Annotation: This 177-nucleotide RNA was probed chemically with 2A3 and DMS. The DMS profile rests on 497 reads. For 2A3 the reverse transcriptase was SuperScript II with manganese.
[RMDB]
RNA sequence: GGGAACGACUCGAGUAGAGUCGAAAAGCAUUGGGAAAGUUAAUCAAAAGUGCAUCAAAACUUUCCCUAAACGAAAUCAAUAUCGUUAUGAUGCACUUUUGACAUCGAUUAAGAUGAAUAGACACAAAACACCUUGUCGUUUCGACGACAAGGUGUUAAAAGAAACAACAACAACAAC
Reactivity to 2A3 in 0.01 (KOAc 150mM, MgCl2 10mM, bicine 150mM(pH8.5), 24C), signal-to-noise 1, nucleotides 027 to 126: g050c050a010u080u230g070g060g000a070a070a020g060u000u040a030a070u090c020a000a010a000a000g060u000g030c000a010u040c020a030a000a000a190c020u000u030u050c000c000c000u000a020a010a000c000g030a090a000a000u300c140a100a070u060a000u190c010g070u170u050a010u150g000a000u010g070c000a000c060u020u000u000u000g010a010c040a010u000c020g140a240u300u160a090a100g000a010u020g000a000a080u090a110g120a030c000a000c020a190a100
Reactivity to DMS in 0.01 (KOAc 150mM, MgCl2 10mM, bicine 150mM(pH8.5), 24C), signal-to-noise 1, nucleotides 027 to 126: g000c150a090u000u020g000g000g020a100a080a210g000u000u020a140a040u020c010a000a000a020a010g040u000g010c020a000u000c000a020a160a040a090c300u000u000u000c010c000c010u000a010a030a000c030g010a020a080a140u090c150a050a090u000a030u020c050g000u000u040a160u000g000a000u000g000c000a010c000u010u000u000u000g000a040c050a010u000c020g000a080u000u030a080a090g000a000u000g000a030a120u000a030g000a080c100a130c250a080a030